[RMDB]
RNA sequence: GGGAACGACUCGAGUAGAGUCGAAAAGACAGAAGAGCGGCCGAGCGGCUCGAGGCUGGGGGACCGCGGGCGCGGCCGCGCGCUGCCGGGCGGGAGGCUGGGGGGCCGGGGCCGGGGCCGUGCCCCGAGUCUCCCUAAAGUUCGCUUUAGGGAGACUAAAAGAAACAACAACAACAAC
Reactivity to DMS in 0.01 (KOAc 150mM, MgCl2 10mM, bicine 150mM(pH8.5), 24C), signal-to-noise 2, nucleotides 027 to 126: g010a130c080a070g010a120a090g030a300g010c030g010g000c040c000g000a080g000c060g020g010c020u010c020g010a040g000g010c030u020g000g020g030g020g010a170c060c030g040c120g010g010g020c020g000c000g000g010c010c000g000c030g000c130g000c010u000g000c010c010g000g000g010c080g010g030g020a050g020g000c080u030g010g000g000g010g000g020c030c010g000g010g030g020c010c030g030g020g020g020c010c020g000u010g010c030c000c010c000g010
Reactivity to 2A3 in 0.01 (KOAc 150mM, MgCl2 10mM, bicine 150mM(pH8.5), 24C), signal-to-noise 3, nucleotides 027 to 126: g030a010c040a010g100a110a020g030a100g050c010g010g020c010c030g040a090g110c060g070g020c030u030c020g020a030g020g010c040u050g000g000g010g010g050a030c020c020g010c060g000g000g000c010g000c000g010g000c000c000g040c000g010c030g030c040u130g090c010c010g010g010g040c100g050g030g040a060g070g000c090u050g030g010g000g010g030g030c010c010g000g000g000g000c000c000g030g000g040g000c000c020g010u030g010c000c000c010c000g000

Structure probing data (DMS and 2A3) for a 177-nucleotide construct. Reactivities are given for positions 27 through 126. Conditions: 150 mM KOAc, 10 mM MgCl2 and 150 mM bicine (pH 8.5), 24 C. It was measured as part of the RMDB library RFM100. The DMS profile rests on 4,973 reads.